[RMDB]
RNA sequence: GGGAACGACUCGAGUAGAGUCGAAAAUAAGGGCUGAGAUGAGUACAUUGAAUUAUCUCGAUAAUUACCAACAGUCAUUAUCAUUGACAGUCACCAACAGUCAUCAACAAAGACAGCAUCAGACAUUUUAAAAUAGAGCCCUCAGUCUGGUCCUGUAGAUUACUGAGUGCUUCGGCACUCAGUAAUCAAAAGAAACAACAACAACAAC
Reactivity to 2A3 in 0.01 (KOAc 150mM, MgCl2 10mM, bicine 150mM(pH8.5), 24C), signal-to-noise 1, nucleotides 027 to 156: u140a000a030g040g010g000c020u010g020a000g020a050u030g050a000g080u040a030c020a060u040u140g040a060a100u130u070a050u100c030u000c020g030a050u000a070a020u050u060a050c040c020a060a180c020a030g020u030c010a010u000u030a020u010c060a060u000u120g030a010c010a020g060u040c040a000c120c050a070a110c040a030g010u000c130a070u110c030a040a130c000a020a050a300g050a000c000a000g210c010a000u200c010a040g050a040c030a020u090u070u230u230a080a230a090a050u080a060g040a030g000c000c000c000u020c000a000g000u000c000u000g010g000u030c030c020u030g000u020a050